[RMDB]
RNA sequence: GGGAACGACUCGAGUAGAGUCGAAAAGAUAUGGAGGAGCUUAGACAUGCUAAUUCGGAAACGAACUAGCAACAGCUAAACUCCUCCUAAGUCAAAAGACUCGCGUCACUUCGGUGACGCGAGUCAAUCAAUCUAACUGGUUCGCCAGUUAGAUUGAAAAAGAAACAACAACAACAAC
Reactivity to DMS in 0.01 (KOAc 150mM, MgCl2 10mM, bicine 150mM(pH8.5), 24C), signal-to-noise 2, nucleotides 027 to 126: g000a030u000a140u010g010g010a020g010g040a010g020c020u000u000a000g030a210c130a180u000g000c000u000a000a010u000u000c010g020g000a040a040a080c000g000a010a010c030u000a000g000c000a000a130c300a090g000c010u000a000a010a040c010u010c000c000u000c000c000u000a000a060g010u000c010a100a090a090a100g010a020c000u000c000g010c010g000u020c010a010c000u000u010c210g020g010u000g010a010c020g000c000g010a000g000u000c000a010a060
About this RNA
Structure probing data (DMS) for a 177-nucleotide construct. The DMS profile rests on 1,868 reads.